[RMDB]
RNA sequence: GGGAACGACUCGAGUAGAGUCGAAAAUCAGAGCUCGGGCCACGCAUUGUUCACCAGGUUAUUAAUCAAAUGAGAAAAGUAAUUUUUCAGAGGCUUGGCAUUCAUUUGAUUGGCAUGCCAUGGCAUGGAAAAUGGUGACGUUCGCGUCACCAUUUUCAAAAGAAACAACAACAACAAC
Reactivity to 2A3 in 0.01 (KOAc 150mM, MgCl2 10mM, bicine 150mM(pH8.5), 24C), signal-to-noise 2, nucleotides 027 to 126: u130c010a010g000a000g020c010u000c060g000g000g000c000c010a010c010g000c010a030u040u100g050u100u090c010a000c020c010a000g020g020u040u040a060u040u090a060a030u040c020a010a000a030u020g040a030g000a030a040a040a000g030u120a090a210u010u070u020u120u110c110a020g010a080g300g000c000u000u010g050g000c020a050u040u010c000a010u000u030u090g070a090u010u000g040g000c050a020u050g030c010c010a110u130g040g010c030a030u080g040
Reactivity to DMS in 0.01 (KOAc 150mM, MgCl2 10mM, bicine 150mM(pH8.5), 24C), signal-to-noise 1, nucleotides 027 to 126: u010c050a060g000a110g010c000u000c070g000g000g010c000c010a090c060g030c070a080u040u020g020u000u000c010a150c020c000a040g050g000u000u000a090u030u000a030a000u000c000a000a070a020u000g000a040g010a130a050a010a050g000u040a090a070u060u000u030u010u080c070a180g000a160g030g000c000u020u000g090g000c130a050u020u000c000a010u000u000u030g000a110u010u000g000g040c080a010u000g040c000c040a040u040g040g040c000a030u020g000
Annotation
Structure probing data (2A3 and DMS) for a 177-nucleotide construct. The DMS profile rests on 1,882 reads. For 2A3, 1,272 sequencing reads were counted. The RNA was probed in 150 mM KOAc, 10 mM MgCl2 and 150 mM bicine (pH 8.5) at 24 C.